Annotation
Structure probing data (DMS and 2A3) for a 177-nucleotide construct.

RNA sequence: GGGAACGACUCGAGUAGAGUCGAAAAUGGCGCAAUUAGGUAAGUGUCGCUUUAUGGCACGAGAUGAAUUCGCCGAUGAAGCAGGCUACCUGAAAGGUAAAAAAGUGGUGAUUGUCGGCUGUGGCGCCACCUUCGGGGGAUUCGUCCCCCGAAGGUGAAAAGAAACAACAACAACAAC
Reactivity to DMS in 0.01 (KOAc 150mM, MgCl2 10mM, bicine 150mM(pH8.5), 24C), signal-to-noise 3, nucleotides 027 to 126: u010g020g010c000g010c080a140a070u000u010a080g020g010u010a060a160g030u000g010u010c030g000c300u000u010u010a060u010g010g010c000a000c000g000a170g010a150u020g000a050a100u020u000c120g010c000c000g020a040u010g020a040a180g000c010a050g000g000c090u000a010c020c000u010g010a070a070a080g010g020u010a000a070a100a070a060a120g000u000g000g020u000g020a190u010u000g010u000c020g000g000c020u000g030u000g000g020c000g020c000
Reactivity to 2A3 in 0.01 (KOAc 150mM, MgCl2 10mM, bicine 150mM(pH8.5), 24C), signal-to-noise 2, nucleotides 027 to 126: u100g010g000c020g000c040a000a070u090u070a150g130g000u130a080a030g030u010g000u030c040g050c050u210u160u170a220u300g010g050c010a010c020g040a040g040a100u130g080a020a060u140u060c030g000c010c000g010a010u050g000a020a010g020c020a030g000g080c020u040a020c000c010u150g100a290a140a090g080g010u160a080a000a000a000a000a130g150u090g070g050u000g070a240u080u090g050u050c000g010g020c040u030g030u050g110g000c010g000c010

The RNA was probed in 150 mM KOAc, 10 mM MgCl2 and 150 mM bicine (pH 8.5) at 24 C.